[RMDB]
RNA sequence: GGGAACGACUCGAGUAGAGUCGAAAAGACUAGCGAGGAGGUGACUCACUGUGACAAGGAGACCCCAGGGAACGGACUGUAUGAGGUCAGAACCCCGCCCGGGAUGGGGUACAGCGGGACUCCAGAACAUUCAGUAUCCGUUCGCGGAUACUGAAUGAAAAGAAACAACAACAACAAC
Reactivity to DMS in 0.01 (KOAc 150mM, MgCl2 10mM, bicine 150mM(pH8.5), 24C), signal-to-noise 3, nucleotides 027 to 126: g010a100c040u000a050g040c050g010a050g010g000a070g020g020u010g010a130c060u000c030a100c070u000g010u000g010a090c100a100a090g000g010a040g000a090c050c010c010c020a090g030g000g000a050a260c070g000g010a030c000u000g000u010a110u000g020a110g000g010u000c020a070g040a070a240c040c010c000c150g030c040c030c020g020g010g000a140u010g020g000g000g000u010a050c170a080g000c090g010g020g010a080c040u010c010c020a150g000a080a160
Reactivity to 2A3 in 0.01 (KOAc 150mM, MgCl2 10mM, bicine 150mM(pH8.5), 24C), signal-to-noise 2, nucleotides 027 to 126: g050a010c030u040a020g020c020g050a070g030g030a020g070g010u030g050a030c000u060c130a070c040u060g030u090g130a050c070a120a080g020g000a020g030a020c000c020c000c060a020g000g000g000a060a070c060g010g030a000c000u060g030u210a270u220g160a110g020g040u010c000a010g030a040a040c000c010c000c000g010c020c000c010g120g040g000a060u140g000g000g000g040u070a080c020a010g090c030g000g000g030a010c010u000c020c010a000g080a060a010
The data come from the RNA Mapping Database (RMDB), library OK2TST. This 177-nucleotide RNA was probed chemically with DMS and 2A3. The RNA was probed in 150 mM KOAc, 10 mM MgCl2 and 150 mM bicine (pH 8.5) at 24 C. Values are in units of 0.01, from 0 to 300, in steps of 10. The DMS profile rests on 2,620 reads.